[RMDB]
Background:
Chemical mapping of a 177-nucleotide RNA with 2A3 and DMS. DMS adducts were read by reverse transcription with MarathonRT. Values cover nucleotides 27 to 126. Conditions: 150 mM KOAc, 10 mM MgCl2 and 150 mM bicine (pH 8.5), 24 C.
RNA sequence: GGGAACGACUCGAGUAGAGUCGAAAAGCUCUUGCGGUGUUACCUCAUAAGCGAGAUCACUCGCCUCUAAAGCAGGUACAUUAUCGACCUGACCAUAGUAAGCGUUGUGAUCGGUACUAGUAACAUACCGUAAUCAGUGCUUCGGCACUGAUUACGGAAAAGAAACAACAACAACAAC
Reactivity to 2A3 in 0.01 (KOAc 150mM, MgCl2 10mM, bicine 150mM(pH8.5), 24C), signal-to-noise 1, nucleotides 027 to 126: g030c010u020c000u060u050g050c070g090g000u040g020u070u060a040c020c060u010c130a120u080a200a030g000c090g060a090g000a130u050c000a010c010u000c000g030c050c010u030c000u010a180a130a020g070c000a000g000g000u120a230c010a150u130u280a190u300c150g010a020c000c010u080g070a300c040c060a070u030a000g020u050a000a070g000c000g090u140u080g000u020g000a000u020c000g000g000u060a050c020u050a000g130u050a080a000c020a060u140a030
Reactivity to DMS in 0.01 (KOAc 150mM, MgCl2 10mM, bicine 150mM(pH8.5), 24C), signal-to-noise 1, nucleotides 027 to 126: g010c010u000c080u000u000g020c130g030g000u010g010u000u000a020c010c100u020c140a090u000a170a080g000c020g000a190g020a030u000c050a000c010u010c010g000c040c000u000c000u000a030a130a170g000c030a000g030g010u000a060c090a100u000u010a100u000c300g000a150c020c000u000g020a120c050c080a120u000a000g010u000a080a130g030c000g020u000u020g030u000g000a020u000c000g000g010u000a030c060u020a040g090u000a040a020c030a030u010a160